[RMDB]
RNA sequence: GGGAACGACUCGAGUAGAGUCGAAAAGCUGACGUCGACAACGUCUUAGAAAGCCAACCUUCAAAGACAGCCGUGACGUCAACACCGUCUUUGAAGCCUGGUUUUCUAAGACGGUCGUGAUGUCAGCCAUUAAGGGGCACUUCGGUGCCCCUUAAUGAAAAGAAACAACAACAACAAC
Reactivity to DMS in 0.01 (KOAc 150mM, MgCl2 10mM, bicine 150mM(pH8.5), 24C), signal-to-noise 3, nucleotides 027 to 126: g040c000u000g010a010c000g010u000c010g020a170c080a090a120c020g010u000c000u000u000a020g000a000a010a000g010c010c030a020a080c250c000u010u000c010a010a010a010g000a010c010a100g000c230c210g020u000g010a140c260g010u010c200a060a090c020a030c000c070g010u000c000u000u000u000g000a000a000g000c220c110u000g020g010u000u010u000u000c000u000a010a000g010a000c000g000g010u000c080g020u000g000a010u000g010u000c000a010g000c010
Reactivity to 2A3 in 0.01 (KOAc 150mM, MgCl2 10mM, bicine 150mM(pH8.5), 24C), signal-to-noise 1, nucleotides 027 to 126: g000c000u000g000a000c010g010u010c000g070a020c020a240a080c060g010u000c010u000u000a000g000a010a010a000g000c010c010a000a020c030c010u020u000c000a010a010a000g000a000c010a040g110c140c090g040u030g090a200c070g130u070c020a020a000c010a000c000c000g000u010c000u010u000u000g010a010a000g000c030c070u040g000g010u020u000u000u060c010u000a000a000g010a000c000g000g000u060c000g020u060g010a020u030g010u000c000a010g010c000